Structure probing data (2A3 and DMS) for a 177-nucleotide construct. The RNA was probed in 150 mM KOAc, 10 mM MgCl2 and 150 mM bicine (pH 8.5) at 24 C.

RNA sequence: GGGAACGACUCGAGUAGAGUCGAAAACGGUGCUGCUCCAUCCGCAUAUGUGUUGGAGACCCGCGGCAAUUUGGCUUCGACAGUGGGCUGAACUUCGCCCCUGCGUUCCUUGCCAAACUCAGUAAACAUAGGUGAUGCAUUUCGAUGCAUCACCUAUAAAAGAAACAACAACAACAAC
Reactivity to 2A3 in 0.01 (KOAc 150mM, MgCl2 10mM, bicine 150mM(pH8.5), 24C), signal-to-noise 5, nucleotides 027 to 126: c030g040g000u050g090c040u030g030c000u030c030c000a030u010c030c030g110c180a110u130a100u300g270u060g010u020u000g000g020a020g010a010c010c000c000g060c070g050g000c000a020a020u110u110u210g040g020c080u030u000c030g160a220c060a010g030u300g020g010g000c020u110g080a210a130c080u250u210c160g000c000c000c000c000u000g000c000g000u010u000c000c000u010u010g000c020c000a020a000a010c060u040c010a030g020u180a000a120a040c110
Reactivity to DMS in 0.01 (KOAc 150mM, MgCl2 10mM, bicine 150mM(pH8.5), 24C), signal-to-noise 2, nucleotides 027 to 126: c050g010g040u000g000c120u010g000c000u010c010c050a010u000c080c030g060c300a220u000a100u030g010u020g030u000u000g020g060a000g000a020c080c000c000g060c130g000g000c040a040a060u000u040u000g000g010c030u010u000c010g010a190c010a000g070u030g000g000g000c000u060g090a200a060c300u040u000c200g060c020c000c000c030u000g000c030g010u010u090c000c000u000u000g000c080c010a000a040a050c060u150c040a070g090u000a120a150a010c180